Chemical mapping of a 177-nucleotide RNA with DMS and 2A3.
Values cover nucleotides 27 to 126.
The RNA was probed in 150 mM KOAc, 10 mM MgCl2 and 150 mM bicine (pH 8.5) at 24 C.
2A3 adducts were read by reverse transcription with SuperScript II with manganese.
[RMDB]
RNA sequence: GGGAACGACUCGAGUAGAGUCGAAAAGUAAAUAAAGCGCACCAAGAUGGAGGUGCGCAACCAGCGUGUCCAUGGAUCACGCAUCCACGCGUCUAGCAAGACGCGAAUGGUAAUACAAAUAAAAAAACAAUGUGUUCCGAUUCGUCGGAACACAUUGAAAAGAAACAACAACAACAAC
Reactivity to DMS in 0.01 (KOAc 150mM, MgCl2 10mM, bicine 150mM(pH8.5), 24C), signal-to-noise 1, nucleotides 027 to 126: g020u000a130a080a200u030a040a160a120g000c000g030c010a000c010c060a100a150g000a270u020g000g020a130g000g000u020g020c010g000c010a000a030c070c070a060g010c000g000u000g030u000c030c030a060u020g010g000a120u010c000a040c000g000c000a070u000c080c010a100c020g000c000g020u010c030u000a100g000c180a070a130g000a000c000g000c010g050a030a030u000g000g020u010a070a020u000a070c100a030a040a090u010a030a030a030a110a110a220a070
Reactivity to 2A3 in 0.01 (KOAc 150mM, MgCl2 10mM, bicine 150mM(pH8.5), 24C), signal-to-noise 2, nucleotides 027 to 126: g000u020a000a050a120u090a100a120a040g020c000g000c000a000c000c010a020a040g150a110u280g060g110a110g060g010u000g000c000g000c000a000a010c010c020a020g000c020g000u020g020u000c040c040a120u140g090g030a040u090c000a010c010g020c010a020u000c010c010a010c000g010c000g000u000c010u020a070g070c100a190a010g010a020c000g000c020g010a000a100u040g000g000u040a030a050u100a060c050a010a060a070u220a090a130a010a000a000a010a010